This 207-nucleotide RNA was probed chemically with 2A3.
For 2A3 the reverse transcriptase was SuperScript II with manganese.

RNA sequence: GGGAACGACUCGAGUAGAGUCGAAAAUAGCCGUUAUGCGCGAAGCGGUGUAGCGUCACUUUGAUGGCGGUACUAUGAAUUGAUGCAAGGUGUGGAGCGACCUUAAACAGUUCUGGUAGUGCUCUGAAAAACAAAUAGGCGUUCGCGCCUAUUUGAAGAUUUUGCACUUGUUCGCAAGUGCAAAAUCAAAAGAAACAACAACAACAAC
Reactivity to 2A3 in 0.01 (KOAc 150mM, MgCl2 10mM, bicine 150mM(pH8.5), 24C), signal-to-noise 3, nucleotides 027 to 156: u090a000g010c000c000g000u020u070a080u160g050c030g000c020g050a020a010g040c030g010g020u050g010u080a030g060c000g010u020c020a040c060u130u090u240g180a200u110g060g000c010g020g050u030a030c020u040a020u150g090a050a040u080u050g040a080u090g060c060a060a030g030g000u020g030u100g030g020a020g020c030g000a010c000c000u050u110a090a050a010c020a030g020u050u000c010u010g010g010u030a040g060u030g030c020u020c040u070g070a070a040a000a060a030c010a000a000a000u000a000g010g000c020g030u040u050c240g000c000g010c080c000u000a000u000u000u000g000a000a000